[RMDB]
RNA sequence: GGGAACGACUCGAGUAGAGUCGAAAAGCCGCUGAAUUGCCGAGAAGCCUGGCUCGAAAUCGUCGACGCAUCGACGACGGUCCUGCCAUGAGACCGUAACGAGGACAUGUCGCCUCGAAUGGCGUCGUAUAACAUGAGUGGUUCGCCACUCAUGUAAGAUUUUACACGUAUUCGUACGUGUAAAAUCAAAAGAAACAACAACAACAAC
Reactivity to DMS in 0.01 (KOAc 150mM, MgCl2 10mM, bicine 150mM(pH8.5), 24C), signal-to-noise 2, nucleotides 027 to 156: g030c000c010g050c020u010g010a100a110u000u000g030c050c020g010a170g020a160a110g020c010c000u000g020g030c020u000c030g000a070a100a050u000c010g000u000c020g000a090c140g010c130a120u000c010g020a030c000g020a030c000g000g000u000c000c010u000g020c020c110a120u000g000a110g010a040c010c010g020u010a030a100c030g030a060g030g010a060c030a110u000g020u000c060g010c000c000u000c020g020a070a080u000g000g030c000g010u000c020g040u000a080u000a130a050c000a010u000g010a040g020u010g010g010u010u010c300g020c020c000a010c000u000c010a000u000g020u000a040a130
Reactivity to 2A3 in 0.01 (KOAc 150mM, MgCl2 10mM, bicine 150mM(pH8.5), 24C), signal-to-noise 6, nucleotides 027 to 156: g030c010c020g000c040u040g050a190a150u140u130g060c030c020g030a040g040a110a020g020c040c090u090g030g000c040u040c060g060a100a070a070u020c010g010u000c010g010a040c070g020c170a110u080c010g010a010c000g000a000c000g020g000u000c000c010u040g010c010c010a040u050g010a010g000a080c000c000g010u050a000a010c010g000a010g000g010a020c040a150u210g040u160c070g010c010c000u020c010g020a010a020u020g010g020c000g020u050c040g010u040a110u050a220a020c000a000u000g000a000g000u000g030g030u040u090c160g050c060c000a000c000u000c000a000u010g000u000a000a000